Source: RMDB library RFM130, as collected in RNAgym.
This 207-nucleotide RNA was probed chemically with 2A3 and DMS.
Values cover nucleotides 27 to 156.
The reactions ran in a buffer of 150 mM KOAc, 10 mM MgCl2 and 150 mM bicine (pH 8.5), at 24 C.

RNA sequence: GGGAACGACUCGAGUAGAGUCGAAAAUCGCACAGGUGUAAUCUAGCCUCUCCUAGGCUUUGUCUGUUACCUUCCUUGGGAAUUCCACUAGCCAGACAUAGCCUGACAGAGGUUAGGUGAAAUCUGAAAAGGGAGCGCUUAAGUUCGCUUAAGCGCACUCAUGCACGUACUUCGGUACGUGCAUGAGAAAAGAAACAACAACAACAAC
Reactivity to 2A3 in 0.01 (KOAc 150mM, MgCl2 10mM, bicine 150mM(pH8.5), 24C), signal-to-noise 3, nucleotides 027 to 156: u140c040g030c090a040c000a020g000g010u020g040u140a010a000u000c000u010a010g000c000c000u010c000u000c010c060u070a010g000g000c000u020u000u000g010u020c010u000g090u060u130a100c010c020u090u170c050c030u180u150g040g000g060a120a150u300u130c060c010a100c110u100a040g080c040c010a000g000a000c000a000u010a000g000c000c000u000g010a020c030a010g010a010g000g020u000u000a000g000g000u000g000a020a000a000u000c000u010g040a040a010a000a000g100g030g060a090g000c010g000c010u000u000a010a010g020u080u130c210g030c130u000u000a000a000g010c000g010c000a010
Reactivity to DMS in 0.01 (KOAc 150mM, MgCl2 10mM, bicine 150mM(pH8.5), 24C), signal-to-noise 1, nucleotides 027 to 156: u030c070g020c110a170c050a020g020g020u020g000u000a230a020u000c070u000a060g000c020c010u010c040u000c030c070u010a060g020g000c010u020u010u010g010u010c010u000g040u020u000a140c030c050u000u000c070c000u050u000g070g030g000a210a180u000u010c000c010a080c200u000a060g020c130c030a110g000a050c000a100u010a250g000c030c010u020g040a040c050a160g050a110g070g010u000u000a010g000g030u000g000a090a250a030u010c020u010g010a030a100a150a170g000g010g000a160g000c000g030c000u000u010a100a030g000u000u010c300g000c000u000u000a020a000g000c030g060c010a070